[RMDB]
RNA sequence: GGGAACGACUCGAGUAGAGUCGAAAAAAGGUGCCAUCAUAUCGGUAAAGAACUCUUAACUCUGAUGGCUUUCGAGUUAUGUGGUGCAUUGAAGCUCUCCCUUCAAAUGGUCGUACAGUUCCGUGAACAGAACGUAUUCUUUCGAGAAUACGUUCUGAAAAGAAACAACAACAACAAC
Reactivity to 2A3 in 0.01 (KOAc 150mM, MgCl2 10mM, bicine 150mM(pH8.5), 24C), signal-to-noise 3, nucleotides 027 to 126: a020a010g080g010u030g010c040c010a020u040c010a000u080a030u150c060g060g000u100a040a080a050g060a130a130c020u030c000u150u030a050a030c020u040c060u110g050a070u080g040g000c000u010u040u030c040g000a020g020u020u040a040u110g070u050g030g010u040g020c040a050u020u120g030a050a010g000c010u000c000u000c030c010c000u000u000c010a060a060a060u090g030g010u040c030g040u040a050c000a060g010u050u000c020c020g050u060g070a050a010
Reactivity to DMS in 0.01 (KOAc 150mM, MgCl2 10mM, bicine 150mM(pH8.5), 24C), signal-to-noise 6, nucleotides 027 to 126: a070a040g010g010u000g010c010c020a040u000c020a060u010a070u010c090g000g010u000a070a080a070g010a100a060c110u000c030u010u010a100a050c070u010c070u000g010a030u000g010g000c070u000u000u000c050g000a070g010u000u000a020u000g020u000g000g010u000g010c040a090u000u000g010a070a070g000c070u010c050u010c050c030c010u000u000c090a040a070a080u000g010g010u000c050g020u000a060c090a080g000u000u000c010c030g010u010g010a100a170
Notes: The data come from the RNA Mapping Database (RMDB), library M2PK90. Chemical mapping of a 177-nucleotide RNA with 2A3 and DMS. For 2A3 the reverse transcriptase was SuperScript II with manganese. In probing experiments dimethyl sulfate is read out at A N1 and C N3, which are open when not base-paired. The RNA was probed in 150 mM KOAc, 10 mM MgCl2 and 150 mM bicine (pH 8.5) at 24 C.